[RMDB]
RNA sequence: GGGAACGACUCGAGUAGAGUCGAAAAGAACAGGAUAACAGGACGCAAGAUAGGAAGUUCAGAUGAAUUGAGAAGAGCCGUAACUCGAUAACAACGGCAGCGUCCUGAAGAAUUUACGGCUCGAGAAGAUACGCUACCGAUUCGUCGGUAGCGUAUCAAAAGAAACAACAACAACAAC
Reactivity to DMS in 0.01 (KOAc 150mM, MgCl2 10mM, bicine 150mM(pH8.5), 24C), signal-to-noise 4, nucleotides 027 to 126: g030a140a100c120a120g000g010a110u030a110a160c000a050g000g000a020c000g010c000a150a050g030a100u040a120g000g000a130a080g020u010u010c050a150g000a110u020g000a060a050u010u000g000a080g010a110a100g020a030g000c000c000g030u010a030a020c220u000c010g010a080u010a030a080c220a120a090c100g010g040c100a130g000c050g020u000c000c000u040g000a030a060g020a100a040u010u010u000a020c000g010g000c000u000c040g000a120g010a130a160
Reactivity to 2A3 in 0.01 (KOAc 150mM, MgCl2 10mM, bicine 150mM(pH8.5), 24C), signal-to-noise 3, nucleotides 027 to 126: g070a110a050c090a060g230g020a110u130a280a010c010a000g010g000a000c000g000c040a040a030g040a190u170a090g170g040a120a020g030u050u040c010a000g000a160u130g090a070a130u100u120g050a040g000a200a060g000a030g010c010c010g030u030a030a030c000u000c050g020a020u030a130a050c080a000a040c070g050g040c030a000g020c010g010u000c000c000u010g000a000a010g000a020a020u020u060u040a000c000g000g020c010u020c000g030a030g020a110a010

The record gives the reactivity of an RNA of 177 nucleotides to DMS and 2A3. The 2A3 profile rests on 3,002 reads. DMS adducts were read by reverse transcription with MarathonRT. The data come from the RNA Mapping Database (RMDB), library OK1LIB. For 2A3 the reverse transcriptase was SuperScript II with manganese. The DMS profile rests on 5,418 reads. The reactions ran in a buffer of 150 mM KOAc, 10 mM MgCl2 and 150 mM bicine (pH 8.5), at 24 C.